[RMDB]
RNA sequence: GGGAACGACUCGAGUAGAGUCGAAAAGCGUUGAUGAGCUACAUUAACGAAGAGCAUACUUAGUCAAAGUAUGCAGAAGCCUUCUGUAGCUCAGAGGGCAGGACUAAUCUUUGACUAAGAUUAGGGACCCCUAUAUGCCUUUCGAGGCAUAUAGGGGAAAAGAAACAACAACAACAAC
Reactivity to 2A3 in 0.01 (KOAc 150mM, MgCl2 10mM, bicine 150mM(pH8.5), 24C), signal-to-noise 2, nucleotides 027 to 126: g030c010g100u050u040g030a030u010g010a080g080c080u070a020c060a050u130u090a100a040c080g040a030a040g040a040g110c010a010u040a080c010u020u060a010g080u100c020a030a080a000g000u040a020u050g030c010a010g100a070a010g050c000c020u030u010c000u020g000u030a010g000c030u020c020a000g020a010g040g020g010c030a000g070g110a030c020u020a020a020u020c010u020u040u070g060a080c080u070a010a000g020a010u010u060a030g030g030g100a070
Reactivity to DMS in 0.01 (KOAc 150mM, MgCl2 10mM, bicine 150mM(pH8.5), 24C), signal-to-noise 2, nucleotides 027 to 126: g000c020g020u000u000g000a180u010g000a070g020c080u010a070c000a060u000u020a090a080c090g010a070a050g000a290g020c070a020u010a020c000u000u000a070g010u000c140a100a000a020g010u000a060u000g000c060a040g010a140a110g010c180c010u000u000c030u000g020u000a070g020c150u010c000a020g010a150g020g000g000c010a090g000g010a080c020u000a020a060u010c000u010u010u000g000a080c170u020a120a000g000a070u010u000a050g000g010g000a300
Source: RMDB library OK2TRN, as collected in RNAgym. This 177-nucleotide RNA was probed chemically with 2A3 and DMS. For 2A3 the reverse transcriptase was SuperScript II with manganese.